Background:
This 207-nucleotide RNA was probed chemically with DMS and 2A3. The RNA was probed in 150 mM KOAc, 10 mM MgCl2 and 150 mM bicine (pH 8.5) at 24 C. DMS adducts were read by reverse transcription with MarathonRT.
[RMDB]
RNA sequence: GGGAACGACUCGAGUAGAGUCGAAAAGGCACUGGUACGAUACGUCGUACCAGUGCAGUCGUUGGGAUGGAACGCAAUUAAAUACAUGUGUGACGUGUAUUUGCGAACGACGUAAUUAUUUUUCAAAAUCACGCUAUCGUGUUCGCACGAUAGCGAAGAUAUGUAAACCGUUCGCGGUUUACAUAUCAAAAGAAACAACAACAACAAC
Reactivity to DMS in 0.01 (KOAc 150mM, MgCl2 10mM, bicine 150mM(pH8.5), 24C), signal-to-noise 4, nucleotides 027 to 156: g030g010c010a020c020u000g000g030u000a010c010g010a080u000a080c300g050u000c000g040u000a000c000c000a000g010u000g020c000a010g010u000c020g010u000u000g000g000g000a170u000g010g010a100a180c010g010c030a130a150u010u000a050a060a050u000a010c030a020u010g020u000g040u000g040a100c060g060u000g020u010a010u000u000u000g010c040g020a040a100c020g010a170c020g010u000a050a120u010u000a160u010u000u010u000u000c060a060a080a100a110u010c140a210c040g020c010u000a010u000c000g040u000g010u000u000c300g010c010a010c000g000a020u000a000g010c010g000a010a010
Reactivity to 2A3 in 0.01 (KOAc 150mM, MgCl2 10mM, bicine 150mM(pH8.5), 24C), signal-to-noise 8, nucleotides 027 to 156: g110g000c000a000c000u000g000g000u000a000c000g000a010u020a070c260g090u010c000g000u010a000c000c000a000g000u000g000c000a000g000u000c010g010u000u040g100g020g060a130u100g080g090a110a040c010g000c020a010a050u190u130a110a080a010u020a000c000a010u010g080u020g110u180g290a060c020g010u020g000u010a010u010u020u040g000c010g000a020a000c020g030a000c030g020u040a070a070u120u170a120u040u110u020u040u090c060a070a050a040a110u130c050a040c060g000c000u000a000u000c000g000u010g020u070u050c170g020c080a000c000g010a000u000a000g000c000g000a000a000